[RMDB]
RNA sequence: GGGAACGACUCGAGUAGAGUCGAAAACUUGGCAGAGACUGAGCUGGUGGCUUGUCCCUCAGGUGGUAGGAACUGCAGAGGAUCACCCAAAGGGCCCUGAGUGAUCCACGCUAAGGGACUCUAGCUCUCCCUAAAGAGCUAGAUGGCCACCCCUCCACUCAUUUAGGAGUUUCGACUCCUAAAUGAGAAAAGAAACAACAACAACAAC
Reactivity to DMS in 0.01 (KOAc 150mM, MgCl2 10mM, bicine 150mM(pH8.5), 24C), signal-to-noise 1, nucleotides 027 to 156: c050u010u020g030g010c050a100g020a150g020a300c020u000g000a100g070c040u020g050g040u000g030g100c030u000u000g010u000c000c020c050u000c040a120g050g000u000g020g020u010a070g000g000a070a050c050u000g020c040a070g030a160g010g000a090u020c040a130c020c020c040a070a100a180g020g020g020c060c020c030u020g000a030g000u000g000a060u000c060c010a070c020g000c050u020a090a070g020g040g030a040c040u010c010u000a020g000c000u010c020u000c060c150c240u000a020a090a030g000a050g000c010u000a010g000a060u000g010g020c020c010a040c020c000c020c000u000c020c030a300
Reactivity to 2A3 in 0.01 (KOAc 150mM, MgCl2 10mM, bicine 150mM(pH8.5), 24C), signal-to-noise 4, nucleotides 027 to 156: c020u040u040g030g030c070a040g090a030g050a300c030u050g020a020g040c040u060g040g000u000g000g020c010u040u100g020u020c000c000c010u010c040a010g000g050u010g010g010u060a020g010g100a230a010c010u130g050c060a000g070a240g070g020a100u120c060a150c040c000c040a070a110a130g030g010g000c000c000c010u000g000a000g000u020g010a020u010c010c000a010c010g110c030u010a010a000g000g000g000a000c000u000c000u020a000g010c010u010c020u050c070c060c000u230a280a260a000g000a000g000c000u000a000g020a070u140g010g000c000c000a000c000c010c000c000u000c010c010a040
Chemical mapping of a 207-nucleotide RNA with DMS and 2A3. For DMS the reverse transcriptase was MarathonRT. Values are in units of 0.01, from 0 to 300, in steps of 10. The reactions ran in a buffer of 150 mM KOAc, 10 mM MgCl2 and 150 mM bicine (pH 8.5), at 24 C. It was measured as part of the RMDB library OK3TST. For 2A3 the reverse transcriptase was SuperScript II with manganese.